[RMDB]
RNA sequence: GGGAACGACUCGAGUAGAGUCGAAAAAAAACGAGCGUAAUCGCGUCUUGACUAGACUGUUAGUGACGUGAGUAGGGAUCUAUCCCAGUGUGCAAAGCGCACAAUACGCUGAUUAACAGUCACGGAACAAUAUAGAUUAGUUCGCUAAUCUAUAUUGAAAAGAAACAACAACAACAAC
Reactivity to 2A3 in 0.01 (KOAc 150mM, MgCl2 10mM, bicine 150mM(pH8.5), 24C), signal-to-noise 9, nucleotides 027 to 126: a000a000a000a010c100g020a020g000c010g020u040a070a080u050c010g000c010g030u020c020u090u170g060a060c030u030a060g010a060c020u020g010u030u010a030g020u010g050a010c010g000u010g020a020g030u100a110g020g010g010a020u050c060u150a120u070c070c000c010a010g030u020g000u000g010c070a240a190a170g070c040g000c020a000c000a000a010u070a020c010g000c010u010g020a080u030u050a020a010c000a010g020u010c030a010c100g080g020a080a040
Reactivity to DMS in 0.01 (KOAc 150mM, MgCl2 10mM, bicine 150mM(pH8.5), 24C), signal-to-noise 9, nucleotides 027 to 126: a040a030a050a060c120g000a040g010c020g010u000a070a080u000c030g020c020g010u000c010u000u010g010a090c080u000a110g010a050c050u000g010u000u000a030g010u000g010a020c020g020u000g010a050g010u010a130g010g000g000a050u010c200u010a090u000c000c000c000a160g010u000g010u000g010c010a100a080a110g010c170g010c010a010c010a050a120u000a080c000g010c030u000g000a070u000u000a020a030c030a020g000u000c010a140c220g000g010a090a120